Source: RMDB library M2PK50, as collected in RNAgym. Chemical mapping of a 177-nucleotide RNA with 2A3 and DMS.
RNA sequence: GGGAACGACUCGAGUAGAGUCGAAAAGUCCCAUACUUCGGUAUGGGACAAAUAAACUUGACUAAAGCCUGUCAAGAAUCACCACAGGCUAAGUGGUGUAAAAAACUAACUUGUUCGCAAGUUAGAACGUAAGUAUCCAGUUCGCUGGAUACUUACGAAAAGAAACAACAACAACAAC
Reactivity to 2A3 in 0.01 (KOAc 150mM, MgCl2 10mM, bicine 150mM(pH8.5), 24C), signal-to-noise 3, nucleotides 027 to 126: g000u000c000c000c000a000u010a010c020u030u060c210g070g000u000a000u000g000g000g000a000c010a020a000a000u010a000a030a020c000u010u010g010a000c000u020a040a000a070g170c010c000u010g000u010c000a010a020g040a040a070u080c010a000c000c010a000c010a030g250g080c090u050a190a030g020u010g000g000u020g000u090a040a120a020a020a000a000c010u010a000a000c000u020u010g010u090u080c240g010c080a000a020g010u000u000a010g010a100a010
Reactivity to DMS in 0.01 (KOAc 150mM, MgCl2 10mM, bicine 150mM(pH8.5), 24C), signal-to-noise 2, nucleotides 027 to 126: g000u000c000c010c000a000u000a000c000u000u030c220g020g020u000a000u000g010g000g020a010c000a000a050a090u000a030a090a140c000u000u000g010a020c000u020a020a040a030g000c020c010u010g000u000c000a010a000g000a300a120u000c010a000c000c000a000c000a090g040g020c210u010a040a100g000u000g020g000u010g020u000a000a060a030a050a070a070c000u000a000a000c000u000u000g010u000u010c160g000c000a000a000g010u020u000a000g000a070a160

2A3 adducts were read by reverse transcription with SuperScript II with manganese. Values are in units of 0.01, from 0 to 300, in steps of 10. The 2A3 profile rests on 3,989 reads.